[RMDB]
RNA sequence: GGGAACGACUCGAGUAGAGUCGAAAAGUCUCUAUCUUCGGAUAGAGACAAAUAUAAGAACGACUUAGAGCUAGAUCAAUUAAUAUCGUCGACAUCGUAAAAAAAGAGGUAUGUUCGCAUACCUCAACAUAACGUAGCAGUUCGCUGCUACGUUAUGAAAAGAAACAACAACAACAAC
Reactivity to 2A3 in 0.01 (KOAc 150mM, MgCl2 10mM, bicine 150mM(pH8.5), 24C), signal-to-noise 4, nucleotides 027 to 126: g000u000c000u000c000u000a000u010c010u020u070c260g110g000a000u010a010g000a010g000a010c000a000a000a000u020a000u000a030a060g070a050a030c020g040a000c050u050u130a030g000a010g130c070u090a040g040a120u040c040a040a030u090u180a140a100u080a030u200c020g040u010c010g040a030c010a080u090c080g090u190a050a100a010a000a010a040a100g010a000g000g000u010a000u000g030u030u060c120g000c080a000u000a010c000c000u000c000a000a000
Reactivity to DMS in 0.01 (KOAc 150mM, MgCl2 10mM, bicine 150mM(pH8.5), 24C), signal-to-noise 4, nucleotides 027 to 126: g020u000c000u000c000u000a000u010c000u000u010c170g040g000a030u000a000g010a020g010a010c000a010a050a060u010a100u010a110a090g010a140a090c030g000a040c030u000u010a140g000a070g020c060u010a070g000a070u010c120a070a110u010u000a100a060u010a040u010c040g000u000c040g000a140c300a060u000c050g000u000a010a000a040a080a060a090a120g020a000g000g000u000a000u010g020u010u010c200g010c000a010u000a000c000c000u000c020a010a060
Description: Conditions: 150 mM KOAc, 10 mM MgCl2 and 150 mM bicine (pH 8.5), 24 C. Chemical mapping of a 177-nucleotide RNA with 2A3 and DMS. The DMS profile rests on 3,711 reads.